The record gives the reactivity of an RNA of 177 nucleotides to DMS and 2A3. The reactions ran in a buffer of 150 mM KOAc, 10 mM MgCl2 and 150 mM bicine (pH 8.5), at 24 C. The 2A3 profile rests on 5,310 reads.

RNA sequence: GGGAACGACUCGAGUAGAGUCGAAAAAGCCAUGAACAAAGCAGCCGCGCUGGAUGAACUGAUACCGGGGUUGCUGAGUGAAUAUAUCGAACAGUCAGGUUAACAGGCUGCGGCAUUUUGUCCGCGCAAUUUGGAUAACUUUCGAGUUAUCCAAAUUAAAAGAAACAACAACAACAAC
Reactivity to DMS in 0.01 (KOAc 150mM, MgCl2 10mM, bicine 150mM(pH8.5), 24C), signal-to-noise 9, nucleotides 027 to 126: a100g020c020c020a080u000g010a180a070c040a060a200a070g010c020a040g010c020c020g010c060g020c100u000g010g000a140u010g010a110a110c170u010g000a150u010a050c100c010g010g010g010g020u000u000g010c010u010g000a300g010u000g000a090a080u010a100u010a080u010c080g000a060a090c080a050g000u000c060a060g010g000u000u010a060a090c110a090g000g000c040u000g030c010g010g010c020a120u000u010u000u000g000u010c010c000g010c050g000c100
Reactivity to 2A3 in 0.01 (KOAc 150mM, MgCl2 10mM, bicine 150mM(pH8.5), 24C), signal-to-noise 3, nucleotides 027 to 126: a000g060c020c010a060u080g030a040a020c010a050a010a020g010c010a010g020c020c010g140c010g020c070u080g000g090a090u100g040a180a110c120u130g040a050u080a110c030c000g010g060g050g030u000u000g000c010u010g000a010g000u040g000a030a030u220a010u050a020u160c080g040a070a040c010a030g120u090c020a010g010g110u110u100a060a040c030a030g020g060c040u150g000c040g000g010c000a010u190u230u100u160g030u010c000c010g020c000g000c010